[RMDB]
Description: The record gives the reactivity of an RNA of 207 nucleotides to 2A3. The reactions ran in a buffer of 150 mM KOAc, 10 mM MgCl2 and 150 mM bicine (pH 8.5), at 24 C. Source: RMDB library M2RFPK, as collected in RNAgym.

RNA sequence: GGGAACGACUCGAGUAGAGUCGAAAAGCGCGAAGCGGUCUAGCGUCACUUUGAUGGCGGUACUAUGAAUUGAUGCAAGGUGUGGAGCGACCUUAAACAGUUCUGGUGGUGCUCUGAAUGGAGUGCUUGAGGCCUCGCCGAUUCGUCGGCGAGGCAAUCAACGGUGUGCUUUCGAGCACACCGUUGAAAAAGAAACAACAACAACAAC
Reactivity to 2A3 in 0.01 (KOAc 150mM, MgCl2 10mM, bicine 150mM(pH8.5), 24C), signal-to-noise 1, nucleotides 027 to 156: g000c020g000c030g060a000a000g090c040g080g010u000c020u050a010g000c000g020u000c000a030c110u300u200u160g090a170u030g060g000c020g000g020u050a060c060u110a090u160g020a090a100u070u060g060a040u060g120c070a080a020g000g000u010g030u070g050g000a010g000c000g000a000c000c040u050u120a090a040a000c010a100g000u030u040c040u030g050g040u030g010g070u020g000c020u000c000u070g120a050a040u210g000g000a070g000u020g020c010u010u120g030a040g090g080c000c000u000c000g000c010c000g000a010u000u060c230g050u020c000g020g000c060g000a000g000g000c000a000a000